Conditions: 150 mM KOAc, 10 mM MgCl2 and 150 mM bicine (pH 8.5), 24 C. Structure probing data (2A3 and DMS) for a 177-nucleotide construct.
[RMDB]
RNA sequence: GGGAACGACUCGAGUAGAGUCGAAAAGGGGACAUAGAUCCACCACUCGUCUGUGGUGUGGAACUCGCCCGACAGGUCGACACUCACCUGCGGAGAGGAUUGACCGCGCAUCAUCGGCAGAGGAAGAGGAAGAUUACUUCUUCGGAAGUAAUCUUCCAAAAGAAACAACAACAACAAC
Reactivity to 2A3 in 0.01 (KOAc 150mM, MgCl2 10mM, bicine 150mM(pH8.5), 24C), signal-to-noise 2, nucleotides 027 to 126: g030g010g000g000a010c030a070u250a100g080a130u020c000c050a070c030c000a010c080u030c040g130u040c060u050g030u020g000g000u060g030u040g030g030a030a040c000u000c010g070c080c010c000g020a040c020a010g000g040u060c050g040a050c060a080c200u120c010a000c020c010u010g000c050g030g040a030g000a020g050g000a030u000u180g070a100c030c060g100c050g000c070a010u030c000a000u020c020g020g000c080a070g020a010g030g030a030a030g020a030
Reactivity to DMS in 0.01 (KOAc 150mM, MgCl2 10mM, bicine 150mM(pH8.5), 24C), signal-to-noise 3, nucleotides 027 to 126: g050g010g000g020a050c070a180u000a110g000a120u010c000c000a090c030c010a160c010u000c280g000u000c070u000g060u010g020g040u000g080u000g010g010a090a080c060u000c090g000c070c000c020g010a160c090a020g040g000u000c050g010a060c120a070c140u000c070a070c010c000u010g000c020g020g000a300g020a050g000g010a100u000u010g000a020c100c070g000c120g000c060a030u010c040a020u010c110g010g000c030a120g000a050g000g010a120a130g000a150
Values cover nucleotides 27 to 126. For 2A3 the reverse transcriptase was SuperScript II with manganese. For DMS, 1,587 sequencing reads were counted. The data come from the RNA Mapping Database (RMDB), library OK2TST.